An RNA of 177 nucleotides, treated with DMS and 2A3 and read out base by base.
The RNA was probed in 150 mM KOAc, 10 mM MgCl2 and 150 mM bicine (pH 8.5) at 24 C.
[RMDB]
RNA sequence: GGGAACGACUCGAGUAGAGUCGAAAAAAGAUAUGGAUCCAGUGUAAGUUGCGUUUACUUGGAUUUAACAUUCGGAAACGAAUGUUUGUCAGUAAACGAACUACAAUUGAGCUGGAUCCUAAGUCAAGUGUAUUAAAUGCUUCGGCAUUUAAUACACAAAAGAAACAACAACAACAAC
Reactivity to DMS in 0.01 (KOAc 150mM, MgCl2 10mM, bicine 150mM(pH8.5), 24C), signal-to-noise 2, nucleotides 027 to 126: a100a080g000a030u010a300u000g000g020a000u000c000c000a020g050u000g010u010a220a130g000u000u000g050c020g020u010u000u000a000c010u000u000g030g020a010u010u010u000a020a010c000a000u000u000c010g000g000a150a150a190c010g000a000a000u000g000u000u000u000g010u000c000a030g010u010a020a010a020c010g010a080a010c080u020a130c020a080a070u010u000g010a210g000c020u000g000g010a010u000c000c010u000a000a070g000u000c040a120a180
Reactivity to 2A3 in 0.01 (KOAc 150mM, MgCl2 10mM, bicine 150mM(pH8.5), 24C), signal-to-noise 3, nucleotides 027 to 126: a000a020g070a040u070a040u130g000g000a010u000c010c010a010g000u020g050u270a250a170g010u030u070g280c000g020u010u000u010a010c040u120u290g210g010a050u280u290u050a010a000c000a000u000u000c000g050g020a040a040a050c010g010a000a000u000g000u010u010u040g000u020c010a020g000u000a000a000a000c010g010a010a000c010u080a030c020a030a190u080u300g080a070g010c000u000g000g010a000u020c000c000u010a050a000g040u020c060a170a130